[RMDB]
Structure probing data (2A3 and DMS) for a 207-nucleotide construct. The RNA was probed in 150 mM KOAc, 10 mM MgCl2 and 150 mM bicine (pH 8.5) at 24 C. 2A3 adducts were read by reverse transcription with SuperScript II with manganese. For DMS the reverse transcriptase was MarathonRT. Reactivities are rounded to 0.1 and cut off at 0 and 3.

RNA sequence: GGGAACGACUCGAGUAGAGUCGAAAACAUAGCGUUUCACAAUGUGCGCCAUUAACACUGUUUAUGCAAGCACGUUUCGCAAUGUACGGCGCAGAAACAUUGCCAACACAAAUACGCUUCACGAUGUAAAACAUCGGUGCGUUCGCGCACCGAUGAACAUUCCUACGGUGUUCGCACCGUAGGAAUGAAAAGAAACAACAACAACAAC
Reactivity to 2A3 in 0.01 (KOAc 150mM, MgCl2 10mM, bicine 150mM(pH8.5), 24C), signal-to-noise 4, nucleotides 027 to 156: c030a060u150a010g020c030g000u030u150u150c150a080c050a080a100u090g000u020g020c000g040c050c000a020u080u120a040a030c160a030c170u160g080u050u040u030a080u070g040c040a040a120g060c040a010c080g010u020u050u040c050g000c030a040a070u010g030u030a050c080g040g070c070g010c050a020g060a020a090a000c030a020u000u010g000c010c020a090a030c040a030c010a160a120a030u150a030c030g000c020u080u090c100a060c120g100a060u130g070u270a040a070a120a040c000a000u000c000g010g000u000g000c000g000u030u040c200g000c000g000c050a000c000c030g000a000u000g000a000a000
Reactivity to DMS in 0.01 (KOAc 150mM, MgCl2 10mM, bicine 150mM(pH8.5), 24C), signal-to-noise 1, nucleotides 027 to 156: c060a080u000a080g000c040g050u000u000u010c080a080c070a060a080u010g060u010g010c000g040c030c060a230u010u000a020a040c000a020c000u030g030u000u000u000a130u020g050c090a090a110g000c050a090c080g010u010u000u010c140g030c080a080a080u000g050u010a040c070g050g030c010g020c010a170g010a090a180a070c010a000u010u000g000c050c000a070a040c060a180c080a090a070a060u010a090c060g030c020u000u000c060a040c110g040a110u050g010u000a130a080a070a130c020a010u000c000g010g050u000g030c010g000u000u010c300g020c030g050c030a010c010c000g000a000u020g030a060a030